Description
The record gives the reactivity of an RNA of 207 nucleotides to 2A3. The data come from the RNA Mapping Database (RMDB), library OK3TST. Conditions: 150 mM KOAc, 10 mM MgCl2 and 150 mM bicine (pH 8.5), 24 C. For 2A3 the reverse transcriptase was SuperScript II with manganese.

RNA sequence: GGGAACGACUCGAGUAGAGUCGAAAAAUUAACCGUGUGUUCCUGACGGAACUCGUCGACAACGCACAGAACAACCACGACACCGCCGGGAGUAAUCAGGGCUAUCAGGCUCUCAACUCGGCAGUUGGCGAAGUCGAUAAAGACGAUUUCCGCCCGGCUUCAGGUUAUCCUUCGGGAUAACCUGAAGAAAAGAAACAACAACAACAAC
Reactivity to 2A3 in 0.01 (KOAc 150mM, MgCl2 10mM, bicine 150mM(pH8.5), 24C), signal-to-noise 1, nucleotides 027 to 156: a020u130u090a010a100c060c060g060u020g000u000g020u080u020c010c070u050g000a010c010g000g030a010a000c030u000c010g030u010c030g020a020c020a070a040c090g070c020a150c050a070g160a160a030c070a060a020c000c050a050c060g090a090c050a010c080c030g050c020c030g000g000g010a060g130u300a010a120u080c090a020g000g010g010c000u050a110u300c170a080g200g050c010u000c000u000c020a030a070c000u000c000g000g000c020a000g000u020u010g020g000c050g000a000a000g000u040c000g020a070u160a090a210a010g020a000c020g010a020u010u000u000c000c020g010c030c020c010g030g000